Structure probing data (2A3 and DMS) for a 207-nucleotide construct. Reactivities are given for positions 27 through 156. The reactions ran in a buffer of 150 mM KOAc, 10 mM MgCl2 and 150 mM bicine (pH 8.5), at 24 C. In probing experiments dimethyl sulfate is read out at A N1 and C N3, which are open when not base-paired. It was measured as part of the RMDB library OK3TST. 2A3 adducts were read by reverse transcription with SuperScript II with manganese.

RNA sequence: GGGAACGACUCGAGUAGAGUCGAAAAGUGGGCCGCCCACUGGGUGGCUGGCGAUUUUGCAAACGGCAAGUUGUAUACCCUGGACUGGGGGAUGCCGUGGGAACACGGCGAAGUGAUUGAGCGCCGCCGUGUGAAUGGCGUUCUGCACGACCAUCAGCCUAAACCAAAGAUUCGUCUUUGGUUUAGGAAAAGAAACAACAACAACAAC
Reactivity to 2A3 in 0.01 (KOAc 150mM, MgCl2 10mM, bicine 150mM(pH8.5), 24C), signal-to-noise 3, nucleotides 027 to 156: g050u060g000g020g000c010c000g020c020c010c010a240c190u170g060g000g000u010g010g000c000u020g070g010c020g030a050u030u070u080u300g050c050a070a040a040c010g070g020c030a080a050g020u040u030g000u070a130u080a070c010c020c010u050g030g090a140c110u060g050g030g020g000g000a040u100g000c000c000g000u020g010g030g020a070a020c000a000c000g020g000c020g010a090a000g030u040g060a220u210u140g030a060g070c000g010c000c000g000c050c060g050u040g040u040g070a080a070u110g000g000c000g010u000u040c050u050g030c010a000c030g050a080c010c020a070u090c020a010g010
Reactivity to DMS in 0.01 (KOAc 150mM, MgCl2 10mM, bicine 150mM(pH8.5), 24C), signal-to-noise 2, nucleotides 027 to 156: g040u000g010g010g020c020c020g050c020c010c020a220c120u060g030g070g060u000g010g030c020u000g050g030c000g000a140u010u000u000u000g030c040a100a110a090c070g010g000c050a080a160g000u000u000g030u000a090u000a060c000c000c010u010g010g000a170c130u010g010g020g000g010g010a070u000g000c010c000g050u010g020g020g020a140a150c000a010c000g010g020c010g010a030a050g010u010g010a220u030u010g010a170g010c040g000c080c020g010c010c010g000u020g020u000g010a110a080u010g010g010c020g060u000u000c050u010g020c000a090c000g000a120c040c010a090u000c050a210g000